Chemical mapping of a 207-nucleotide RNA with DMS and 2A3.
For 2A3 the reverse transcriptase was SuperScript II with manganese.
The RNA was probed in 150 mM KOAc, 10 mM MgCl2 and 150 mM bicine (pH 8.5) at 24 C.
DMS adducts were read by reverse transcription with MarathonRT.

RNA sequence: GGGAACGACUCGAGUAGAGUCGAAAACUGUGCCCAGCCCAUGAUGCUAUCCUUGAGUUGGGAUUUGAGUGAUAGAAAAUUGGCUGAGUUUCAGAUCUGCUGCAAUGGAGAUUAUUGUAAUGAUUGUAGGUAGCAAGAUAGCUGCUCUUAUAAAUGAAUAUCCAUAUUUAUUCGUAAAUAUGGAUAUAAAAGAAACAACAACAACAAC
Reactivity to DMS in 0.01 (KOAc 150mM, MgCl2 10mM, bicine 150mM(pH8.5), 24C), signal-to-noise 3, nucleotides 027 to 156: c020u000g020u010g000c010c010c000a060g020c030c010c040a070u000g010a280u000g020c000u000a020u000c000c020u000u000g010a050g030u010u000g030g030g000a150u000u000u000g010a080g040u000g000a070u000a060g000a050a060a170a160u000u010g000g020c010u000g010a070g010u000u000u000c050a090g010a080u000c070u000g020c020u010g010c060a090a130u010g020g010a130g020a080u010u000a060u020u000g010u000a050a150u010g000a110u000u000g000u010a040g030g020u000a050g040c030a050a120g020a150u000a110g020c020u000g000c010u000c060u000u000a060u010a050a060a150u000g000a160
Reactivity to 2A3 in 0.01 (KOAc 150mM, MgCl2 10mM, bicine 150mM(pH8.5), 24C), signal-to-noise 5, nucleotides 027 to 156: c020u020g030u040g040c030c010c010a000g000c020c010c000a010u040g020a040u160g030c010u010a010u030c010c000u030u010g030a020g060u120u080g140g100g050a080u050u040u070g040a030g010u170g000a010u020a040g030a050a070a020a040u040u030g000g000c010u020g020a020g030u130u230u060c010a020g010a090u010c010u100g040c030u010g010c030a030a100u080g050g030a090g030a060u070u070a060u060u210g110u080a090a090u140g100a090u040u060g030u020a020g000g040u020a000g010c020a060a020g070a180u110a050g050c010u050g020c000u000c020u090u160a160u100a140a140a050u290g020a010